RNA sequence: GGGAACGACUCGAGUAGAGUCGAAAAAGCUCCUGUUUCGACAGGAGCUGUGUGGCUGCCGUUUUGUGCUCGAUGUAGAGUGCUUUCCUGCCGGAAAGGGCUUGAGAGCUUGAUUCGUCAAGCUCAAACCAUUCAGCCUAUUCGUAGGCUGAAUGGUAAAAGAAACAACAACAACAAC
Reactivity to DMS in 0.01 (KOAc 150mM, MgCl2 10mM, bicine 150mM(pH8.5), 24C), signal-to-noise 4, nucleotides 027 to 126: a010g020c000u000c000c000u000g000u000u000u010c160g010a050c000a000g010g000a010g020c000u000g010u010g020u010g010g010c010u000g000c040c030g010u000u000u000u000g010u010g010c020u000c020g000a110u010g000u010a150g000a040g010u000g000c010u000u000u010c010c000u010g020c160c090g010g000a050a060a080g000g000g010c050u000u010g000a160g000a010g010c000u000u000g010a040u000u010c170g010u000c000a000a010g010c000u000c010a040a110
Reactivity to 2A3 in 0.01 (KOAc 150mM, MgCl2 10mM, bicine 150mM(pH8.5), 24C), signal-to-noise 2, nucleotides 027 to 126: a000g010c000u010c010c000u010g030u040u060u060c200g090a010c000a000g000g010a000g000c000u000g000u010g000u010g000g030c030u010g000c010c020g020u020u020u100u140g080u040g010c030u010c030g060a110u150g050u110a050g000a020g040u020g050c000u050u020u010c020c030u040g110c030c010g000g000a160a100a050g060g020g020c060u140u190g110a130g010a000g020c000u000u030g030a040u020u030c110g000u020c100a000a000g000c000u010c000a050a020
The record gives the reactivity of an RNA of 177 nucleotides to DMS and 2A3. The DMS profile rests on 8,712 reads. The reactions ran in a buffer of 150 mM KOAc, 10 mM MgCl2 and 150 mM bicine (pH 8.5), at 24 C. For 2A3 the reverse transcriptase was SuperScript II with manganese.